Overview:
The data come from the RNA Mapping Database (RMDB), library M2PK50. Chemical mapping of a 177-nucleotide RNA with 2A3 and DMS. The reactions ran in a buffer of 150 mM KOAc, 10 mM MgCl2 and 150 mM bicine (pH 8.5), at 24 C.
[RMDB]
RNA sequence: GGGAACGACUCGAGUAGAGUCGAAAAUCCGAGAGAUUCGUCUCUCGGAAAAGAUCGUUGUGAACACGAUAGUACAUAUUAAAUUAAAACUAACAAAAUAAAAAACUUACCUAUUCGUAGGUAAGAAGAUACUAAUAUGUUUCGACAUAUUAGUAUCAAAAGAAACAACAACAACAAC
Reactivity to 2A3 in 0.01 (KOAc 150mM, MgCl2 10mM, bicine 150mM(pH8.5), 24C), signal-to-noise 3, nucleotides 027 to 126: u000c000c000g000a000g000a010g010a000u050u080c120g040u000c130u000c000u000c000g000g000a020a020a000a000g020a000u000c010g000u020u060g170u070g140a060a010c040a010c070g030a030u030a060g080u110a060c070a060u300a120u300u240a200a090a140u140u150a140a260a110a040c030u140a030a090c030a030a100a130a130u300a130a250a040a020a020a000c010u000u000a020c000c000u010a010u040u140c130g020u040a000g000g000u010a010a000g010a010a010
Reactivity to DMS in 0.01 (KOAc 150mM, MgCl2 10mM, bicine 150mM(pH8.5), 24C), signal-to-noise 1, nucleotides 027 to 126: u000c020c010g030a000g010a000g010a020u000u000c220g050u000c000u000c000u030c010g000g000a000a010a050a120g020a110u000c000g020u000u000g020u010g040a150a190c200a030c020g010a050u000a060g020u000a060c060a030u030a060u000u030a100a030a120u000u020a090a160a000a020c000u030a100a130c030a010a070a000a110u000a030a070a180a080a040a090c000u000u010a020c000c000u000a030u010u000c130g020u000a020g000g000u000a010a000g000a040a020
2A3 adducts were read by reverse transcription with SuperScript II with manganese. The DMS profile rests on 1,003 reads.